Conditions: 150 mM KOAc, 10 mM MgCl2 and 150 mM bicine (pH 8.5), 24 C. Chemical mapping of a 207-nucleotide RNA with 2A3. The 2A3 profile rests on 433 reads. Reactivities are given for positions 27 through 156.
RNA sequence: GGGAACGACUCGAGUAGAGUCGAAAAAACGCCAUGCCAAUAUUCAUUAUAGAAAUGUUCUGCGAAAUGAUCGCACCAUUCUUUUUCAUGCUGAAGUUUUGGUUUGAGAUUGUAGUUGAUAAACCUUUUGACUUCAGCCACAUCUUCAGACUCGCUGCUUACGCACCCUUUUCGAAGGGUGCGUAAGAAAAGAAACAACAACAACAAC
Reactivity to 2A3 in 0.01 (KOAc 150mM, MgCl2 10mM, bicine 150mM(pH8.5), 24C), signal-to-noise 2, nucleotides 027 to 156: a040a000c160g090c060c000a100u100g020c010c020a110a060u150a050u110u080c010a040u040u270a130u120a260g110a030a050a010u000g010u060u150c070u040g000c000g000a040a110a080u300g080a130u110c000g010c030a010c000c000a060u070u000c040u040u180u050u060u130c040a040u250g000c000u000g000a000a000g020u000u000u130u060g090g000u050u010u060g060a050g020a060u120u300g150u260a160g060u020u060g070a110u140a040a030a080c000c000u020u060u060u230g030a000c000u000u000c000a050g010c000c000a020c000a020u090c050u120u080c020a040g030a030c070u060c140g040c040u060g010